An RNA of 177 nucleotides, treated with 2A3 and read out base by base. It was measured as part of the RMDB library RFM100. The reactions ran in a buffer of 150 mM KOAc, 10 mM MgCl2 and 150 mM bicine (pH 8.5), at 24 C. The 2A3 profile rests on 590 reads. Values are in units of 0.01, from 0 to 300, in steps of 10.
RNA sequence: GGGAACGACUCGAGUAGAGUCGAAAACUGCUCGGGGCGGAAGCAUUAAAACCAUUCGAGCUAGUCAAUGCGUGGCGUGUCUCUCCGCAGCGUGUUGGCGAAUGUAAAGAGUGACUAAGCAUGUAGUUCCGUGGUCAUGUUUCGACAUGACCACGGAAAAAGAAACAACAACAACAAC
Reactivity to 2A3 in 0.01 (KOAc 150mM, MgCl2 10mM, bicine 150mM(pH8.5), 24C), signal-to-noise 1, nucleotides 027 to 126: c110u070g050c000u000c000g000g000g010g040c240g040g020a000a050g020c090a010u250u150a040a000a000a240c000c000a030u000u030c110g000a020g010c000u000a000g000u000c000a020a000u000g020c010g070u080g280g000c000g040u030g000u000c020u000c000u000c000c000g000c000a030g000c000g000u000g000u000u000g000g040c000g000a000a000u020g000u150a000a040a000g000a000g000u000g000a000c050u080a030a010g110c050a080u090g020u090a080g140u000